RNA sequence: GGGAACGACUCGAGUAGAGUCGAAAACUGGCCAGUGUGGAAGUACGUGAGUACUUCACUCUCUACGGGAGUAGAGACACACUGAUCGUGGAGCGAUGUCUUGGAACUACUCCCGUAGUUCACGUAUGACUCACGUCAUACCAAGACGCCAGCCACGCGGAUAAAUAAUAUUCGUAUUAUUUAUCCGAAAAGAAACAACAACAACAAC
Reactivity to DMS in 0.01 (KOAc 150mM, MgCl2 10mM, bicine 150mM(pH8.5), 24C), signal-to-noise 3, nucleotides 027 to 156: c020u010g000g020c020c000a040g030u000g000u000g000g020a090a100g000u000a010c000g010u000g000a290g020u010a050c060u010u010c050a100c100u010c050u000c000u040a010c010g020g020g010a180g000u000a010g000a050g010a250c020a010c030a030c000u000g000a020u000c040g020u010g020g010a200g020c050g010a060u000g020u000c010u000u000g020g000a090a190c010u000a030c010u000c060c110c070g020u000a000g000u010u000c080a110c060g000u010a060u000g000a070c010u000c130a090c160g020u000c040a060u000a050c010c020a040a030g010a020c030g030c010c010a040g020c010c020a040c080g010
Reactivity to 2A3 in 0.01 (KOAc 150mM, MgCl2 10mM, bicine 150mM(pH8.5), 24C), signal-to-noise 7, nucleotides 027 to 156: c000u000g000g000c010c000a010g000u000g000u010g030g040a090a030g010u090a020c010g020u040g040a020g010u080a190c000u080u080c030a080c020u110c010u000c000u000a000c000g010g010g020a030g000u000a000g000a000g040a010c000a000c000a000c000u000g000a010u010c020g020u100g140g150a140g120c020g000a010u010g000u010c000u000u020g010g010a030a040c000u010a000c010u010c000c040c030g000u000a000g000u080u160c140a110c110g080u130a040u150g020a010c000u010c050a010c030g010u000c000a000u030a060c000c000a000a010g000a000c000g000c000c000a000g000c000c000a050c040g040
Structure probing data (DMS and 2A3) for a 207-nucleotide construct. 2A3 is a SHAPE reagent: it acylates the 2'-hydroxyl of flexible nucleotides of all four kinds. For 2A3, 11,946 sequencing reads were counted. Values cover nucleotides 27 to 156. The reactions ran in a buffer of 150 mM KOAc, 10 mM MgCl2 and 150 mM bicine (pH 8.5), at 24 C. 2A3 adducts were read by reverse transcription with SuperScript II with manganese. The data come from the RNA Mapping Database (RMDB), library OK3TST.